The data come from the RNA Mapping Database (RMDB), library OK2TRN.
An RNA of 177 nucleotides, treated with 2A3 and DMS and read out base by base.
The RNA was probed in 150 mM KOAc, 10 mM MgCl2 and 150 mM bicine (pH 8.5) at 24 C.
For DMS, 1,378 sequencing reads were counted.
For 2A3, 1,063 sequencing reads were counted.
Reactivities are given for positions 27 through 126.
RNA sequence: GGGAACGACUCGAGUAGAGUCGAAAAGGGGGGGCGUCAUAACACUUGGUGAACUUGGGCCAGAUCUGUUGUUCACUUGAAACAAAUUGCCUUUAGAUCUGCUCCCCCAUGCUAGCAGGGAGGGAAAGAUCUACUACCGGUUCGCCGGUAGUAGAUCAAAAGAAACAACAACAACAAC
Reactivity to 2A3 in 0.01 (KOAc 150mM, MgCl2 10mM, bicine 150mM(pH8.5), 24C), signal-to-noise 1, nucleotides 027 to 126: g000g010g010g020g000g000g030c020g020u060c020a140u080a120a030c040a020c110u040u090g040g020u020g000a010a000c010u030u190g010g050g000c020c030a010g070a300u040c030u050g200u110u010g030u040u080c010a090c140u060u110g100a080a100a020c040a050a150a070u110u110g030c020c000u110u060u050a060g000a050u000c050u080g030c010u040c000c040c000c000c020a000u020g000c010u020a040g000c010a010g000g010g030a120g050g070g060a070a060a020
Reactivity to DMS in 0.01 (KOAc 150mM, MgCl2 10mM, bicine 150mM(pH8.5), 24C), signal-to-noise 2, nucleotides 027 to 126: g020g000g010g000g000g010g030c040g000u010c090a090u010a040a100c150a060c120u000u030g040g000u000g000a030a040c050u010u000g000g000g000c070c210a050g020a070u010c040u040g000u000u000g000u000u000c020a090c110u000u020g010a130a050a120c160a040a040a030u000u020g000c140c030u000u000u000a060g000a040u010c120u000g000c010u010c010c020c010c010c000a010u000g040c080u000a080g000c060a080g010g000g000a080g030g000g000a080a030a050